[RMDB]
The record gives the reactivity of an RNA of 177 nucleotides to DMS and 2A3.
RNA sequence: GGGAACGACUCGAGUAGAGUCGAAAAUGAGCCAAAUUUGGAAGGAGAUCACCAAGGAGAGAACAUUACUGUGCAAGCUGUGAAGGGUGGAGUUUUUGGAUAGCUGGUUUGGGAUACAUCCAGGAGGCGUGGAAUUAAAGUUCGCUUUAAUUCCACGAAAAGAAACAACAACAACAAC
Reactivity to DMS in 0.01 (KOAc 150mM, MgCl2 10mM, bicine 150mM(pH8.5), 24C), signal-to-noise 5, nucleotides 027 to 126: u010g010a110g020c030c030a050a070a130u010u010u000g020g010a100a060g000g010a080g000a070u000c070a070c060c060a070a080g010g000a070g010a090g010a070a060c090a070u000u000a070c090u000g010u000g020c090a060a060g000c060u000g010u000g010a070a080g000g000g010u000g010g010a080g010u000u000u000u000u000g010g010a070u000a070g010c050u000g010g000u000u000u010g000g000g020a090u010a080c100a040u000c020c040a040g000g000a070g010g000
Reactivity to 2A3 in 0.01 (KOAc 150mM, MgCl2 10mM, bicine 150mM(pH8.5), 24C), signal-to-noise 3, nucleotides 027 to 126: u090g010a020g010c030c020a030a100a060u200u140u150g060g030a050a040g040g030a050g010a070u090c020a010c060c020a040a020g020g000a040g010a010g020a030a010c010a070u110u190a080c050u080g020u020g090c030a010a070g040c030u040g030u060g160a040a020g030g020g020u080g020g040a070g010u060u040u030u070u050g080g020a050u030a060g040c030u040g000g040u050u070u040g060g000g000a030u040a140c020a020u020c030c000a020g000g040a010g040g070
The RNA was probed in 150 mM KOAc, 10 mM MgCl2 and 150 mM bicine (pH 8.5) at 24 C. The data come from the RNA Mapping Database (RMDB), library OK2TRN. For 2A3 the reverse transcriptase was SuperScript II with manganese. The DMS profile rests on 8,454 reads.